[RMDB]
RNA sequence: GGGAACGACUCGAGUAGAGUCGAAAAGAUAUGGAGACGCCUCAAUCCUAUCUGAGAACGAUAAGGAGCCAUCGGAAACGAUGGGCUCCUUUUGACGUUCUGUAGGAUUGAGGCGUCUCCUAAGUCACUAACAACAGUACUUCGGUACUGUUGUUAGAAAAGAAACAACAACAACAAC
Reactivity to DMS in 0.01 (KOAc 150mM, MgCl2 10mM, bicine 150mM(pH8.5), 24C), signal-to-noise 2, nucleotides 027 to 126: g010a050u010a300u020g000g010a030g010a020c010g020c000c000u000c010a020a010u000c000c000u020a020u010c230u030g000a010g020a030a020c010g020a150u000a010a010g010g020a010g020c000c000a020u010c000g020g000a190a110a240c020g000a020u010g030g050g010c000u010c000c000u000u000u000u000g000a140c080g010u020u000c000u000g010u000a000g020g000a030u000u000g000a000g000g010c000g000u000c000u000c000c000u000a010a080g010u010c070a300
The data come from the RNA Mapping Database (RMDB), library TTRINS.
Structure probing data (DMS) for a 177-nucleotide construct.
DMS adducts were read by reverse transcription with MarathonRT.
Conditions: 150 mM KOAc, 10 mM MgCl2 and 150 mM bicine (pH 8.5), 24 C.